[RMDB]
This 207-nucleotide RNA was probed chemically with 2A3. The reactions ran in a buffer of 150 mM KOAc, 10 mM MgCl2 and 150 mM bicine (pH 8.5), at 24 C. It was measured as part of the RMDB library M2RFPK. Reactivities are given for positions 27 through 156.

RNA sequence: GGGAACGACUCGAGUAGAGUCGAAAAAGAUCCACGCUACGGCGUGGAUCACACGUUCAUCCCUAUUGGGAGGGAAGUAGGCAUAGUGCCGAAGGAACGCAUUAGUCAUGCGCUACGGCGCAUGACACACAUCAGAGUCACUUCGGUGACUCUGAAACGGUCAUCUAUUCUUCGGAAUAGAUGACCGAAAAGAAACAACAACAACAAC
Reactivity to 2A3 in 0.01 (KOAc 150mM, MgCl2 10mM, bicine 150mM(pH8.5), 24C), signal-to-noise 2, nucleotides 027 to 156: a000g000a000u000c020c000a000c000g020c000u040a030c210g120g000c000g000u000g010g070a000u000c000a000c000a000c000g010u000u000c020a060u070c020c000c000u140a300u130u300g120g000g040a070g020g050g000a030a040g010u020a000g000g000c040a060u030a220g110u170g160c000c000g000a000a000g080g000a000a000c020g030c050a080u020u160a050g000u020c000a030u000g020c000g010c000u050a050c180g130g000c000g000c000a000u000g010a000c000a000c000a000c010a040u080c010a010g000a000g000u010c000a000c040u020u090c170g080g000u000g000a000c000u000c010u000g000a000a000a000